[RMDB]
The record gives the reactivity of an RNA of 177 nucleotides to 2A3 and DMS.
For DMS, 1,422 sequencing reads were counted.
DMS adducts were read by reverse transcription with MarathonRT.
RNA sequence: GGGAACGACUCGAGUAGAGUCGAAAAGAAGAGAAAGGAGACACAGGGACAGUCUCCAGAGGUUCCUAAGGACUCGAUCGCGCCUGCCGGGAAUCAUGGACUCCCGGUUGUCCAUGACAGAAGAAGAACUACGAUGAUGCUUCGGCAUCAUCGUAGUAAAAGAAACAACAACAACAAC
Reactivity to 2A3 in 0.01 (KOAc 150mM, MgCl2 10mM, bicine 150mM(pH8.5), 24C), signal-to-noise 1, nucleotides 027 to 126: g060a010a000g120a000g080a040a070a000g100g000a030g010a000c040a010c150a120g010g060g150a000c010a070g000u000c000u000c000c000a000g020a000g020g020u010u050c000c000u080a080a130g080g000a060c010u020c010g090a100u010c040g000c010g000c040c000u020g010c030c020g010g000g000a080a000u010c000a060u210g050g000a000c000u130c000c010c000g010g000u030u040g000u000c010c000a040u100g040a080c060a030g110a160a000g000a120a010g060a030
Reactivity to DMS in 0.01 (KOAc 150mM, MgCl2 10mM, bicine 150mM(pH8.5), 24C), signal-to-noise 2, nucleotides 027 to 126: g040a050a050g000a030g000a060a220a200g000g000a000g070a000c030a090c040a230g010g030g000a090c140a100g000u000c000u050c000c020a020g000a090g000g000u000u000c010c000u000a160a210g000g000a180c030u020c060g000a100u000c000g000c300g000c040c000u000g030c000c020g040g000g010a090a010u010c040a120u060g020g000a050c040u000c020c040c000g000g000u000u000g010u000c000c020a030u000g010a080c250a050g000a070a070g000a020a130g100a150
For 2A3, 867 sequencing reads were counted. Source: RMDB library OK1LIB, as collected in RNAgym.